[RMDB]
RNA sequence: GGGAACGACUCGAGUAGAGUCGAAAACUAGGAAAAAGGAUGCAAGUAUCUUAUCUAAAGCGAGUUCGGGGUAGUUAGAGCCGAAUGGUAGGACUGCAGAUUGGCGCUUCCGUUUGGGCAGUGUGAUAGUUAAGAAUGAGUUCGCUCAUUCUUAACUAAAAGAAACAACAACAACAAC
Reactivity to 2A3 in 0.01 (KOAc 150mM, MgCl2 10mM, bicine 150mM(pH8.5), 24C), signal-to-noise 7, nucleotides 027 to 126: c030u040a050g070g070a080a050a020a020a000g130g020a040u070g020c030a080a070g010u070a100u050c030u080u060a040u020c050u110a100a060a010g030c020g020a010g010u030u050c020g000g010g010g020u030a120g040u090u070a020g010a020g080c000c010g020a030a030u030g020g030u030a020g010g080a040c030u060g000c020a020g030a210u060u150g060g000c040g000c030u030u000c020c000g120u050u110u100g070g020g000c030a030g020u030g010u020g100a090u030
Reactivity to DMS in 0.01 (KOAc 150mM, MgCl2 10mM, bicine 150mM(pH8.5), 24C), signal-to-noise 6, nucleotides 027 to 126: c040u000a090g010g010a020a050a080a110a060g000g010a090u010g000c030a070a080g020u020a070u010c020u000u000a050u000c030u010a070a060a060g010c030g000a100g010u010u000c040g000g000g000g020u010a050g010u010u010a060g010a100g010c030c010g000a040a030u010g010g020u000a030g000g000a060c040u000g000c030a050g010a130u010u010g010g010c080g000c050u000u000c030c030g010u000u010u010g010g000g000c070a050g010u010g020u010g010a140u000
Background: Conditions: 150 mM KOAc, 10 mM MgCl2 and 150 mM bicine (pH 8.5), 24 C. This 177-nucleotide RNA was probed chemically with 2A3 and DMS. For DMS the reverse transcriptase was MarathonRT.